RNA sequence: GGGAACGACUCGAGUAGAGUCGAAAAGAUAUGGACCCACAUUACCUUUUGACGGAUCCAGGUCGGAAACGACCUGAAGAUCCGAUAAGGUAGUGGGUCCUAAGUCAAACGCGACUUCGGUCGCGAAGGUUGGUUCUAAGUUCGCUUAGAACCAACCAAAAGAAACAACAACAACAAC
Reactivity to DMS in 0.01 (KOAc 150mM, MgCl2 10mM, bicine 150mM(pH8.5), 24C), signal-to-noise 2, nucleotides 027 to 126: g020a030u000a270u000g000g000a020c000c000c010a010c020a070u000u030a000c000c000u000u000u030u010g010a300c080g000g010a000u000c010c000a000g030g010u000c000g030g020a090a110a100c000g010a010c010c000u000g000a050a100g020a000u000c000c000g030a050u000a000a010g020g000u000a050g000u020g000g000g010u000c000c000u000a000a050g000u010c000a090a090a300c020g020c010g000a000c000u000u020c260g050g020u000c020g010c000g000a020a040
Reactivity to 2A3 in 0.01 (KOAc 150mM, MgCl2 10mM, bicine 150mM(pH8.5), 24C), signal-to-noise 2, nucleotides 027 to 126: g000a000u010a030u080g000g000a000c000c100c020a020c020a040u250u220a020c020c010u070u170u210u300g300a270c080g000g000a000u000c010c000a000g000g000u000c000g000g000a000a050a010c020g000a000c020c030u000g000a010a000g010a000u000c000c020g000a020u030a020a000g000g000u000a000g000u010g000g000g000u000c000c000u000a000a000g010u040c000a050a030a070c020g000c000g010a010c000u030u090c300g140g000u020c010g000c000g060a080a000